[RMDB]
RNA sequence: GGGAACGACUCGAGUAGAGUCGAAAACUGACUAAAUGGAUCAAGGCUUACAAAACUGCUUUGACAAGCCGGGCAUCAAACUGACAGCUCAUUGGAAAGGCAUGCCUCGUCACAAGCCUGAAGAGACACAGAAUGACAGUUCACAGGCUCAAGUGCAAUCAUUACCGGCUUUCGAGCCGGUAAUGAUAAAAGAAACAACAACAACAAC
Reactivity to 2A3 in 0.01 (KOAc 150mM, MgCl2 10mM, bicine 150mM(pH8.5), 24C), signal-to-noise 1, nucleotides 027 to 156: c040u000g050a000c050u150a180a030a070u110g070g030a070u080c060a060a000g020g050c050u050u090a150c060a020a180a000a080c070u080g050c000u020u000u040g020a000c010a000a050g100c150c010g010g000g010c000a020u030c050a080a130a220c130u130g050a010c020a000g000c020u000c070a030u020u050g010g010a000a050a030g000g000c040a000u000g000c000c020u050c000g070u020c000a000c000a120a010g000c000c000u020g060a120a060g060a010g100a010c040a000c040a090g190a080a080u180g110a040c000a070g050u040u020c060a040c020a090g000g020c020u010c150a170a050g050u070g010c050a000